[RMDB]
An RNA of 177 nucleotides, treated with 2A3 and DMS and read out base by base. Reactivities are rounded to 0.1 and cut off at 0 and 3. Conditions: 150 mM KOAc, 10 mM MgCl2 and 150 mM bicine (pH 8.5), 24 C. Reactivities are given for positions 27 through 126. DMS adducts were read by reverse transcription with MarathonRT.
RNA sequence: GGGAACGACUCGAGUAGAGUCGAAAAUGAAAACUGUGGAGCGAAGCAGGGAUCAGGUGAUGGCUGGAUGGUGCAGACUCUGCAUGUGUACUCCAUGUCGUUAUCAUCAAUGACAAGAUGGCAUUGAUCUUUCUCGAAGGUUCGCCUUCGAGAAAGAAAAAGAAACAACAACAACAAC
Reactivity to 2A3 in 0.01 (KOAc 150mM, MgCl2 10mM, bicine 150mM(pH8.5), 24C), signal-to-noise 1, nucleotides 027 to 126: u150g000a010a000a000a000c070u020g020u020g050g080a080g060c060g020a080a000g010c020a010g090g000g020a040u030c020a030g030g020u020g020a080u030g020g000c040u030g030g040a080u070g080g000u030g010c030a000g020a210c010u000c030u080g010c060a060u150g030u000g040u110a010c010u000c000c010a000u070g000u030c020g050u060u020a070u100c010a000u000c000a010a060u050g010a040c040a000a050g090a180u050g030g000c010a000u020u020g000a010
Reactivity to DMS in 0.01 (KOAc 150mM, MgCl2 10mM, bicine 150mM(pH8.5), 24C), signal-to-noise 2, nucleotides 027 to 126: u000g000a070a050a150a140c060u000g010u000g020g000a030g020c100g010a090a170g020c080a050g010g000g000a160u000c080a050g000g020u000g010a040u020g010g020c020u000g000g000a080u000g040g010u000g000c040a070g000a090c090u000c060u010g010c020a060u020g040u020g030u010a160c090u000c010c080a050u010g000u010c030g040u000u010a030u010c060a110u000c010a030a030u020g000a020c060a100a100g000a090u000g000g000c050a010u000u000g010a120